This 177-nucleotide RNA was probed chemically with 2A3. 2A3 adducts were read by reverse transcription with SuperScript II with manganese.
RNA sequence: GGGAACGACUCGAGUAGAGUCGAAAAUUGGACCUUGUACCCGCGGGCCGUGCGCAAAAGGGGAAAAUACGGGAUCCCCGUGGCCUCUAAAGCGACGGCGCAUGUGCAGCUCGUGGCCGUCAGUCACCCCUCACCGUCCGUUCGCGGACGGUGAGGGAAAAGAAACAACAACAACAAC
Reactivity to 2A3 in 0.01 (KOAc 150mM, MgCl2 10mM, bicine 150mM(pH8.5), 24C), signal-to-noise 1, nucleotides 027 to 126: u020u110g060g000a000c000c000u000u040g100u000a010c000c000c000g000c000g000g060g000c000c000g000u080g010c030g000c010a080a100a020a040g000g000g000g000a000a090a000a090u300a000c110g000g020g010a140u190c050c020c010c000g000u010g030g110c000c000u000c010u030a140a080a010g100c030g050a050c050g090g000c030g080c000a020u000g010u080g010c030a060g010c020u020c050g040u030g000g010c000c000g030u060c000a000g050u040c020a140c030